[RMDB]
Structure probing data (2A3 and DMS) for a 177-nucleotide construct.

RNA sequence: GGGAACGACUCGAGUAGAGUCGAAAACAUGUGGCCACGGGUGCGGGCUUCUGAUGAUGCGGUCCGGUCAAAAUAUGCCGCAGCUGACGGUGACUGCAGGGCUUCAGUCAGUGCCCCACGGGUGGCUAAAGACUAGAUGAUUCGUCAUCUAGUCUUUAAAAGAAACAACAACAACAAC
Reactivity to 2A3 in 0.01 (KOAc 150mM, MgCl2 10mM, bicine 150mM(pH8.5), 24C), signal-to-noise 5, nucleotides 027 to 126: c030a040u150g060u140g160g010c000c030a020c140g240g060g000u030g030c220g010g000g040c020u230u100c000u130g010a020u020g020a070u060g010c040g010g010u000c000c000g000g020u050c010a030a050a140a090u250a140u280g030c020c020g050c060a110g070c110u110g050a110c010g000g010u050g010a010c020u060g020c070a090g000g040g000c010u020u020c000a000g010u000c000a000g000u010g010c010c000c010c000a000c020g080g050g000u000g000g000c000u000
Reactivity to DMS in 0.01 (KOAc 150mM, MgCl2 10mM, bicine 150mM(pH8.5), 24C), signal-to-noise 8, nucleotides 027 to 126: c060a110u010g020u010g010g010c000c000a010c020g000g020g030u000g010c250g030g000g010c010u000u010c010u010g000a030u000g000a120u000g010c080g000g010u000c020c010g000g010u010c030a050a060a090a110u010a110u010g010c010c080g010c070a160g010c150u010g000a100c160g010g000u000g000a040c030u000g020c130a120g010g010g000c030u000u000c050a120g000u000c010a010g010u000g000c010c000c010c010a020c010g000g010g030u000g010g000c010u000
Conditions: 150 mM KOAc, 10 mM MgCl2 and 150 mM bicine (pH 8.5), 24 C. For DMS, 17,214 sequencing reads were counted. The 2A3 profile rests on 6,689 reads.